RNA sequence: GGGAACGACUCGAGUAGAGUCGAAAACUCGCUGUUUUUGUGGCUGGCUUUCAGCGGGCUGGAGGAGCCGGGAGCGGAGGCGGAGGACCGAGCCAAAAACGUCUGCCGAGGCCGGGCGGCCCCGCUCAAAAUCUUCGUAUCUUCGGAUACGAAGAAAUCUUCUAUAAGUGUUCGCACUUAUAGAAGAAAAAGAAACAACAACAACAAC
Reactivity to 2A3 in 0.01 (KOAc 150mM, MgCl2 10mM, bicine 150mM(pH8.5), 24C), signal-to-noise 1, nucleotides 027 to 156: c010u020c020g000c040u020g060u030u070u000u030u060g060u010g040g000c010u040g010g020c020u040u090u080c020a010g030c050g020g050g000c010u030g030g060a080g030g070a030g000c000c030g070g070g000a020g010c030g010g020a140g010g010c030g050g070a070g020g030a030c000c010g000a040g020c000c020a130a000a000a050a070c050g060u100c100u130g020c040c030g030a040g000g030c040c030g060g000g010c030g000g030c100c010c000c000g000c000u050c030a050a110a070a110u000c000u000u000c000g000u000a000u000c000u000u070c130g070g000a000u000a000c000g000a000a000g000a010a000a000
Description:
Chemical mapping of a 207-nucleotide RNA with 2A3. It was measured as part of the RMDB library M2RFPK. For 2A3, 722 sequencing reads were counted. For 2A3 the reverse transcriptase was SuperScript II with manganese.